[RMDB]
RNA sequence: GGGAACGACUCGAGUAGAGUCGAAAACUCUGCUAAUUCGUUAGCAGAGGUACACUCGGACGGGUCGGGAGGGGGAUACUCGCGGUCCCAAGAAGAAUCCAGCAAGCACAUUAUUCGUAAUGUGCAAGAGGGGGUUAAGAUUCGUCUUAACCCCCUCAAAAGAAACAACAACAACAAC
Reactivity to DMS in 0.01 (KOAc 150mM, MgCl2 10mM, bicine 150mM(pH8.5), 24C), signal-to-noise 1, nucleotides 027 to 126: c020u000c010u020g000c000u000a000a000u010u020c140g000u000u000a000g020c010a000g000a000g030g010u000a050c250a050c120u010c040g000g000a120c110g010g010g030u000c040g010g010g000a060g020g000g010g000g000a030u000a010c010u000c050g010c020g010g000u000c000c000c000a140a080g010a150a070g010a070a060u000c010c020a160g000c250a200a100g000c000a000c000a000u000u000a030u000u040c240g020u000a000a000u000g010u000g010c000a080a040